[RMDB]
RNA sequence: GGGAACGACUCGAGUAGAGUCGAAAAGAUAUGGACAUGCCACUUCGCAUACUUCCCUCGGAAACGAGCAGUAUGAACUACGAAGUGACAUGUCCUAAGUCAAAACUAUCAACUUCGGUUGAUAGAACUUUUACACGAACUUCGGUUCGUGUAAAAGAAAAGAAACAACAACAACAAC
Reactivity to DMS in 0.01 (KOAc 150mM, MgCl2 10mM, bicine 150mM(pH8.5), 24C), signal-to-noise 1, nucleotides 027 to 126: g000a040u000a300u000g000g000a010c010a000u000g000c000c000a000c000u000u000c000g000c020a010u000a000c010u000u000c300c210c010u000c000g000g010a090a100a120c010g020a010g030c120a010g020u000a010u000g010a090a120c130u030a260c030g030a010a030g010u000g000a010c010a000u010g020u020c000c000u000a000a070g000u000c030a080a120a050a090c000u000a010u000c000a000a000c000u000u010c140g020g000u000u010g000a000u000a000g020a060a090
Reactivity to 2A3 in 0.01 (KOAc 150mM, MgCl2 10mM, bicine 150mM(pH8.5), 24C), signal-to-noise 1, nucleotides 027 to 126: g020a000u060a040u120g000g010a010c000a000u000g000c000c010a000c020u010u000c000g070c010a000u020a010c000u050u060c050c000c000u000c000g000g010a070a100a050c000g030a000g020c090a010g060u020a010u010g030a080a030c090u200a050c290g010a010a000g000u000g000a000c000a000u000g000u000c000c000u000a020a000g040u000c050a020a000a090a090c000u020a010u010c000a030a000c000u070u050c300g120g000u030u030g020a010u010a000g010a010a000